[RMDB]
RNA sequence: GGGAACGACUCGAGUAGAGUCGAAAAGGCGGAAGAGACCAAGUCCGCUCGACUAGCGGAGGCAUCCUGGUGGCAAGAGCCGCGUUACGCCAGGCCUCAAGGACGCGAUGCUGAAUAGGCUAGAAGUACCCUAAACAUACUUCGGUAUGUUUAGGGUAAAAGAAACAACAACAACAAC
Reactivity to DMS in 0.01 (KOAc 150mM, MgCl2 10mM, bicine 150mM(pH8.5), 24C), signal-to-noise 2, nucleotides 027 to 126: g000g030c020g030g000a040a070g000a140g000a150c060c080a120a170g000u000c020c000g040c000u000c060g030a120c030u000a040g000c050g010g040a190g010g000c080a090u000c020c000u000g030g000u000g000g000c000a040a050g000a090g010c020c050g000c020g010u000u020a050c170g000c010c040a090g000g020c090c030u000c040a030a070g000g000a080c120g010c100g040a130u000g010c000u000g030a170a150u020a050g000g000c030u000a060g010a090a050g020u020
Reactivity to 2A3 in 0.01 (KOAc 150mM, MgCl2 10mM, bicine 150mM(pH8.5), 24C), signal-to-noise 1, nucleotides 027 to 126: g010g000c000g070g000a050a020g090a060g010a110c050c010a060a000g070u000c000c000g000c020u040c020g160a140c000u030a000g000c030g030g040a030g030g010c000a010u050c000c010u030g100g000u060g060g000c100a080a060g030a050g130c000c020g080c060g030u100u080a020c030g000c020c000a030g010g050c000c000u070c000a040a060g040g010a000c000g000c020g070a010u010g000c010u000g000a040a080u090a160g100g000c020u000a030g010a090a020g110u030
An RNA of 177 nucleotides, treated with DMS and 2A3 and read out base by base. It was measured as part of the RMDB library VIROID. The reactions ran in a buffer of 150 mM KOAc, 10 mM MgCl2 and 150 mM bicine (pH 8.5), at 24 C. In probing experiments dimethyl sulfate is read out at A N1 and C N3, which are open when not base-paired. The 2A3 profile rests on 1,540 reads. For 2A3 the reverse transcriptase was SuperScript II with manganese.